[RMDB]
RNA sequence: GGGAACGACUCGAGUAGAGUCGAAAAAGUCUGUUGUCUCAAGGAUUGGAGACUCCAUCUUUACAGGCUGUACUGGCUCUUGGAACAAGGUCACUCAAAUUGCUAACAUGUUCUUGGAACAGACUCAUCACUAACCUCUUCGGAGGUUAGAAAAGAAACAACAACAACAAC
Reactivity to 2A3 in 0.01 (KOAc 150mM, MgCl2 10mM, bicine 150mM(pH8.5), 24C), signal-to-noise 9, nucleotides 027 to 129: a000g020u000c020u010g030u040u030g080u040c010u010c080a050a070g130g040a120u130u270g100g010a080g030a050c030u020c030c020a140u050c040u050u160u090a050c020a020g040g000c020u050g060u120a110c060u070g030g010c040u020c000u090u070g050g020a040a020c030a090a080g050g010u070c030a030c060u100c030a080a140a210u230u170g040c040u100a060a050c040a130u110g020u030u030c000u010u020g020g010a020a010c000a010g020a040c020u010c050a110u060c000a020
Reactivity to DMS in 0.01 (KOAc 150mM, MgCl2 10mM, bicine 150mM(pH8.5), 24C), signal-to-noise 9, nucleotides 027 to 129: a030g020u020c000u010g000u010u000g020u030c030u030c030a090a060g010g000a070u000u040g040g010a110g000a040c070u010c080c020a080u050c070u030u030u020a070c050a030g000g000c010u000g010u010a060c090u010g010g020c050u000c010u010u000g000g000a050a050c070a060a080g000g000u030c080a060c090u010c110a070a100a120u060u000g000c110u040a030a070c110a060u040g020u040u000c040u000u000g000g010a040a040c050a030g000a080c050u000c070a100u020c100a100